[RMDB]
RNA sequence: GGGAACGACUCGAGUAGAGUCGAAAAGGGGUCUAAGCGGUAGGUGACCGCUCGCUUGGAUUUAUACACUGAAGCCUCCACGGUGUAUUGUCAGCGAUGUCACCUAUAAUCGCUUAGACGGAGGCACCCAAAACUCCGUCUCUUCGGAGACGGAGAACGGUGCCUCCGACUUCGGUCGGAGGCACCGAAAAGAAACAACAACAACAAC
Reactivity to 2A3 in 0.01 (KOAc 150mM, MgCl2 10mM, bicine 150mM(pH8.5), 24C), signal-to-noise 2, nucleotides 027 to 156: g030g010g050g000u010c000u000a000a000g000c000g080g030u040a040g000g000u030g000a000c000c050g020c010u010c000g010c050u160u210g160g010a060u170u210u190a050u020a000c020a000c000u030g050a140a030g060c020c070u040c010c000a010c000g000g000u010g010u010a040u010u040g050u050c080a040g000c000g010a040u300g020u000c000a000c000c000u030a020u010a010a020u040c000g000c010u010u000a000g000a000c000g010g000a010g000g000c020a060c000c010c020a000a100a130a120c000u010c000c000g010u000c010u000c000u010u050c220g090g000a010g000a000c000g000g000a010g000a010a000